[RMDB]
RNA sequence: GGGAACGACUCGAGUAGAGUCGAAAAAAGGAAUUAGCGUGCCUUCAUGCUAAGGGUUUGAUAUCUGCUAAAACCCGGUGCAUUCAUCAAUGCAGGUUAAGCCAAAGGGAUGUCCCGACCGGAGGCAAAAAGUUCGCUACGUUCGCGUAGCGAACAACUUAUGUACCAACUUCGGUUGGUACAUAAGAAAAGAAACAACAACAACAAC
Reactivity to 2A3 in 0.01 (KOAc 150mM, MgCl2 10mM, bicine 150mM(pH8.5), 24C), signal-to-noise 2, nucleotides 027 to 156: a000a020g090g010a040a030u090u040a100g020c030g030u020g030c040c060u130u260c080a050u070g010c000u040a020a060g010g010g000u040u010u010g030a030u030a060u110c070u070g000c010u040a000a000a040a060c010c010c010g080g020u090g020c020a060u050u120c030a030u070c060a120a160u090g010c030a010g030g030u050u150a100a000g000c000c010a000a000a020g020g000g000a030u060g020u030c000c000c000g000a000c000c010g000g010a000g010g010c000a000a000a000a000a060g000u000u000c000g000c000u000a010c000g000u020u040c160g020c000g100u000a010g010c000g000a000a000c000a000a000
Reactivity to DMS in 0.01 (KOAc 150mM, MgCl2 10mM, bicine 150mM(pH8.5), 24C), signal-to-noise 4, nucleotides 027 to 156: a090a070g010g000a070a100u000u000a040g000c050g030u030g010c070c040u000u000c050a080u000g020c010u000a210a130g020g000g000u000u010u000g010a180u000a060u000c020u010g020c050u010a120a050a020a050c010c000c000g020g080u010g030c020a070u000u010c040a060u000c050a120a220u000g010c040a050g020g010u000u010a070a130g000c000c010a020a300a250g010g010g000a100u000g010u010c000c000c000g000a070c020c020g010g010a300g010g000c030a050a030a060a070a070g010u000u000c000g010c010u010a010c000g020u010u000c300g030c030g060u000a020g010c010g010a000a000c000a020a050
Structure probing data (2A3 and DMS) for a 207-nucleotide construct. DMS adducts were read by reverse transcription with MarathonRT. The RNA was probed in 150 mM KOAc, 10 mM MgCl2 and 150 mM bicine (pH 8.5) at 24 C. The DMS profile rests on 10,709 reads. For 2A3, 2,541 sequencing reads were counted.